[RMDB]
RNA sequence: GGGAACGACUCGAGUAGAGUCGAAAACCGAUUCCCUUCGGGGAAUCGGAAAGAAAGCACGAAAAUAAAAUAAAGGGAAAGGGAACGUGCACCCACGCAUAAAAAGAACCAUCUUCGGAUGGUUCAAUCAAAGAUUCUACUUCGGUAGAAUCUUUGAAAAAGAAACAACAACAACAAC
Reactivity to 2A3 in 0.01 (KOAc 150mM, MgCl2 10mM, bicine 150mM(pH8.5), 24C), signal-to-noise 2, nucleotides 027 to 126: c010c000g000a000u000u000c010c000c000u000u040c230g070g020g000g000a000a000u020c020g000g040a000a000a000g010a000a040a000g020c020a000c030g050a190a040a070a070u210a060a160a060a050u280a100a230a090g070g010g010a080a050a040g020g020g010a020a100c000g000u000g030c000a040c020c000c000a000c040g090c030a160u190a230a190a010a010a010g020a010a000c000c000a010u000c000u030u060c290g120g000a000u000g000g000u000u000c000a000a000
Reactivity to DMS in 0.01 (KOAc 150mM, MgCl2 10mM, bicine 150mM(pH8.5), 24C), signal-to-noise 2, nucleotides 027 to 126: c000c000g020a000u000u000c030c000c000u000u010c210g050g000g020g020a010a020u000c000g010g000a000a050a110g010a110a090a120g030c000a010c000g020a100a050a100a060u020a070a050a040a130u020a070a120a150g000g010g000a050a100a050g010g010g000a040a080c020g020u010g020c020a190c000c030c010a150c230g010c150a060u000a110a050a040a160a090g000a010a000c010c000a020u000c020u000u000c220g000g000a000u000g010g000u000u000c000a020a050
Structure probing data (2A3 and DMS) for a 177-nucleotide construct. The reactions ran in a buffer of 150 mM KOAc, 10 mM MgCl2 and 150 mM bicine (pH 8.5), at 24 C. The DMS profile rests on 1,508 reads. 2A3 adducts were read by reverse transcription with SuperScript II with manganese. The 2A3 profile rests on 1,822 reads.